[RMDB]
RNA sequence: GGGAACGACUCGAGUAGAGUCGAAAAACAGCCACAGCCGUAAUGCUGGAAGGGACUCCAAGGACCACCAUCUUGCUGAUGGGGAAACUGAGGCUCUGAGUCUGCUCCCCCAGACCACAGAGGGGAAACGGCCUAGUUAAUUCGUUAACUAGGCCGUAAAAGAAACAACAACAACAAC
Reactivity to 2A3 in 0.01 (KOAc 150mM, MgCl2 10mM, bicine 150mM(pH8.5), 24C), signal-to-noise 1, nucleotides 027 to 126: a030c010a010g050c010c030a020c000a020g000c030c020g170u150a090a050u150g010c010u030g030g060a080a080g080g010g010a000c010u030c020c050a090a050g090g020a110c040c040a190c080c000a110u030c040u200u300g180c210u200g080a000u000g000g050g000g000a050a000a080c050u050g010a010g010g030c010u060c020u000g040a030g000u030c000u010g000c100u110c040c000c000c020c000a010g000a010c090c000a100c070a050g110a260g050g000g000g010a030a040
Reactivity to DMS in 0.01 (KOAc 150mM, MgCl2 10mM, bicine 150mM(pH8.5), 24C), signal-to-noise 2, nucleotides 027 to 126: a090c090a090g000c030c060a170c020a040g020c020c090g000u000a150a100u010g010c000u010g030g000a060a090g030g000g000a060c030u000c030c110a130a150g010g000a170c010c010a150c000c010a010u000c000u010u020g050c260u000g010a010u000g000g000g000g000a050a050a130c020u000g010a160g000g000c050u010c030u010g000a120g000u000c000u010g020c120u010c000c000c010c100c030a020g000a050c060c100a110c160a020g020a110g030g000g000g010a070a180
Structure probing data (2A3 and DMS) for a 177-nucleotide construct. The reactions ran in a buffer of 150 mM KOAc, 10 mM MgCl2 and 150 mM bicine (pH 8.5), at 24 C. Values cover nucleotides 27 to 126. The 2A3 profile rests on 798 reads. For 2A3 the reverse transcriptase was SuperScript II with manganese.